The record gives the reactivity of an RNA of 177 nucleotides to DMS. Conditions: 150 mM KOAc, 10 mM MgCl2 and 150 mM bicine (pH 8.5), 24 C.

[RMDB]
RNA sequence: GGGAACGACUCGAGUAGAGUCGAAAAGAUAUGGAUGGAGGGCUCCCGAACGAGCAACAGCUAUACCGCUCGUCGGAAACGACGAUGUAUAGACAUGCUUCAGUAGGGAGCCCUCCAUCCUAAGUCACUAAGAUACUAAGUUCGCUUAGUAUCUUAGAAAAGAAACAACAACAACAAC
Reactivity to DMS in 0.01 (KOAc 150mM, MgCl2 10mM, bicine 150mM(pH8.5), 24C), signal-to-noise 6, nucleotides 027 to 126: g010a040u010a300u010g000g000a020u000g010g010a030g020g020g020c000u000c000c000c010g000a160a210c300g000a010g010c000a030a110c300a160g000c000u000a010u000a000c010c040g000c020u000c000g000u000c000g010g000a100a120a190c000g010a020c010g010a010u010g000u010a000u000a010g000a060c120a230u000g000c000u000u000c050a080g010u010a120g000g000g000a000g000c010c000c000u000c000c000a000u010c000c000u000a000a050g000u010c030a230